[RMDB]
Source: RMDB libraries RFM100 and RFMREP, as collected in RNAgym.
Chemical mapping of a 177-nucleotide RNA with DMS and 2A3.
The RNA was probed in 150 mM KOAc, 10 mM MgCl2 and 150 mM bicine (pH 8.5) at 24 C.
RNA sequence: GGGAACGACUCGAGUAGAGUCGAAAACCUGCGUGGGUUAUCCACGGCGGAAGCGGCUUGAGUAAUCAGCCUUCGACCGCCAGCUAACAAGCAGGCUUAAACCCGGAGGGAAGCAAUUCAGCACGGGAAUACAAAUAAAGUUCGCUUUAUUUGUAUUAAAAGAAACAACAACAACAAC
Reactivity to DMS in 0.01 (KOAc 150mM, MgCl2 10mM, bicine 150mM(pH8.5), 24C), signal-to-noise 9, nucleotides 027 to 126: c000c000u000g010c010g020u020g010g020g010u010u010a020u020c040c120a140c150g000g010c000g010g000a060a190g010c300g000g000c000u010u030g040a010g000u050a180a140u000c000a030g010c000c000u000u030c020g000a300c000c000g010c000c000a100g010c100u000a040a040c080a120a140g000c010a010g000g000c060u010u010a050a100a200c010c000c000g010g000a210g010g000g000a040a040g000c230a080a100u000u010c030a050g010c040a290c030g010g000g000
Reactivity to 2A3 in 0.01 (KOAc 150mM, MgCl2 10mM, bicine 150mM(pH8.5), 24C), signal-to-noise 9, nucleotides 027 to 126: c000c000u010g000c030g040u100g050g200g010u120u070a050u090c030c040a080c090g000g000c000g000g010a040a010g010c020g040g000c050u190u260g030a010g030u220a150a210u050c010a000g000c000c000u060u140c020g020a030c000c010g000c000c000a000g000c020u030a030a040c020a080a040g000c010a000g020g000c010u090u130a080a080a060c000c000c000g000g020a080g020g040g010a030a020g030c040a030a100u080u050c020a020g020c040a010c020g000g010g010